[RMDB]
RNA sequence: GGGAACGACUCGAGUAGAGUCGAAAAGAGCUCUAGAUGCGAUUGUAGACUGUUACAGCAUCUCCUAUCAGUCUGAGAUAGCUCAGGAUAGGUGGAGCUAUCUGCAACGGUGCAGACUCCAGUGACACCGUGAACAAUCGUUCAUGUCACAGAGCAGCCGUAGCGUACGAUUCGUCGUACGCUACGGAAAAGAAACAACAACAACAAC
Reactivity to 2A3 in 0.01 (KOAc 150mM, MgCl2 10mM, bicine 150mM(pH8.5), 24C), signal-to-noise 1, nucleotides 027 to 156: g000a000g000c000u000c020u000a000g000a030u120g000c010g010a030u020u010g000u000a040g030a140c070u000g050u100u030a090c040a080g010c060a210u090c060u000c010c020u050a040u050c000a090g060u030c010u010g000a010g000a050u140a080g030c000u010c000a000g200g060a120u200a160g090g170u100g070g000a020g000c010u010a030u030c010u000g020c050a120a050c090g130g000u000g000c000a010g030a130c020u010c010c010a020g000u000g020a000c000a000c000c010g070u030g030a100a000c000a010a070u070c020g070u110u130c020a060u210g040u040c000a020c020a040g010a000g000c000a000g010

This 207-nucleotide RNA was probed chemically with 2A3. Values cover nucleotides 27 to 156. The 2A3 profile rests on 564 reads.